[RMDB]
RNA sequence: GGGAACGACUCGAGUAGAGUCGAAAAGGAUGCUCGUUCGCGAGCAUCCACUGAGUUAGCCACUAUAAAGAUUAAGUCUUCCUACUCGAGACAGGAUGUCUAUGCUCCUGGCCUUCGGGCCAGGAAACUCAGUCAUCAGAUUCGUCUGAUGACUGAGAAAAGAAACAACAACAACAAC
Reactivity to DMS in 0.01 (KOAc 150mM, MgCl2 10mM, bicine 150mM(pH8.5), 24C), signal-to-noise 2, nucleotides 027 to 126: g010g010a010u010g000c000u000c000g020u000u000c240g010c010g010a010g030c000a000u000c000c000a030c120u010g010a090g000u000u000a080g000c120c100a120c130u000a060u010a040a090a100g010a060u000u000a120a090g010u000c020u000u000c040c000u010a010c020u000c010g000a020g000a130c050a130g000g000a110u000g010u000c020u000a080u000g020c130u000c000c000u000g000g000c010c000u000u010c180g000g010g000c010c010a000g000g000a000a010a090
Reactivity to 2A3 in 0.01 (KOAc 150mM, MgCl2 10mM, bicine 150mM(pH8.5), 24C), signal-to-noise 2, nucleotides 027 to 126: g010g000a010u010g000c010u010c000g010u050u120c280g010c020g150a000g010c000a000u000c010c000a000c000u020g020a010g080u010u090a010g050c040c050a070c030u090a060u110a200a200a020g080a100u080u190a150a050g040u000c000u040u010c000c000u010a010c000u000c010g020a020g050a060c040a040g140g050a110u170g060u020c020u090a130u120g080c030u020c020c000u010g000g010c000c020u030u030c200g050g040g000c000c000a010g000g000a010a010a000